[RMDB]
This 177-nucleotide RNA was probed chemically with DMS and 2A3. The RNA was probed in 150 mM KOAc, 10 mM MgCl2 and 150 mM bicine (pH 8.5) at 24 C. Reactivities are given for positions 27 through 126.

RNA sequence: GGGAACGACUCGAGUAGAGUCGAAAACUCGAAAGAGACCUGCAUAUCUUACCCAGAUGAACAAGUCACGUCUGAAAAGCGAAAGCCCUAAGAUAUGCAGCUGUGAAGACUUGACGCAGAAAAUAAAACCGACUAGUAGUUUCGACUACUAGUCGGUAAAAGAAACAACAACAACAAC
Reactivity to DMS in 0.01 (KOAc 150mM, MgCl2 10mM, bicine 150mM(pH8.5), 24C), signal-to-noise 2, nucleotides 027 to 126: c000u020c000g010a120a080a140g060a080g030a210c270c000u000g020c010a020u000a000u000c000u000u000a030c220c070c010a080g000a070u010g030a050a100c000a000a030g000u010c020a300c100g040u000c000u010g030a060a020a080a020g000c000g000a080a090a030g000c000c230c050u000a050a090g000a010u000a000u030g000c080a010g010c000u020g030u000g010a060a050g010a030c020u000u000g000a300c030g020c050a010g010a080a100a060a090u030a020a050a070
Reactivity to 2A3 in 0.01 (KOAc 150mM, MgCl2 10mM, bicine 150mM(pH8.5), 24C), signal-to-noise 3, nucleotides 027 to 126: c000u010c000g040a030a070a010g040a000g050a070c000c010u000g000c000a010u000a010u000c000u020u030a060c070c050c030a020g000a010u020g030a090a040c010a030a000g000u010c010a010c030g010u000c000u020g170a220a180a090a030g060c030g060a090a020a010g000c000c010c000u000a000a000g000a000u010a000u010g000c000a010g000c000u020g000u020g020a060a040g010a000c000u000u020g000a040c010g000c010a000g080a060a110a030a020u170a010a080a040